Description: Chemical mapping of a 177-nucleotide RNA with DMS and 2A3. Reactivities are rounded to 0.1 and cut off at 0 and 3. Values cover nucleotides 27 to 126.
RNA sequence: GGGAACGACUCGAGUAGAGUCGAAAAGACAGAGGCUUAUAUCAAAAAACUCGAAUCAGAUUUGAGGGUGAAAAAAGCUUUACUCUUUUUUGCCAUCCAAAUCUUCAUUUUCCUUUACUUGGAUAGAUUCAUCAUUCCCAUUCGUGGGAAUGAUGAAAAAAGAAACAACAACAACAAC
Reactivity to DMS in 0.01 (KOAc 150mM, MgCl2 10mM, bicine 150mM(pH8.5), 24C), signal-to-noise 1, nucleotides 027 to 126: g000a060c130a180g000a030g000g000c130u000u030a140u000a140u020c080a000a000a240a110a080a080c000u050c020g060a030a080u000c040a090g010a300u010u000u000g000a080g000g000g050u000g020a000a000a000a030a000a030g000c150u030u000u050a110c200u000c000u000u000u000u000u040u010g060c000c040a030u020c080c000a020a000a020u030c040u000u010c070a030u000u000u000u000c000c000u000u010u010a140c100u010u000g000g050a030u040a130g000a260
Reactivity to 2A3 in 0.01 (KOAc 150mM, MgCl2 10mM, bicine 150mM(pH8.5), 24C), signal-to-noise 4, nucleotides 027 to 126: g030a000c050a040g040a000g060g020c050u220u090a110u080a040u280c100a050a180a030a000a000a050c020u030c020g030a010a050u100c030a050g000a030u000u020u010g060a060g040g000g010u130g060a030a020a000a000a010a000g020c000u100u130u170a170c050u050c000u060u000u000u000u000u030g000c010c010a030u060c020c040a020a000a010u020c000u080u050c020a100u030u060u030u100c030c000u140u110u100a110c020u050u090g040g010a060u100a170g120a100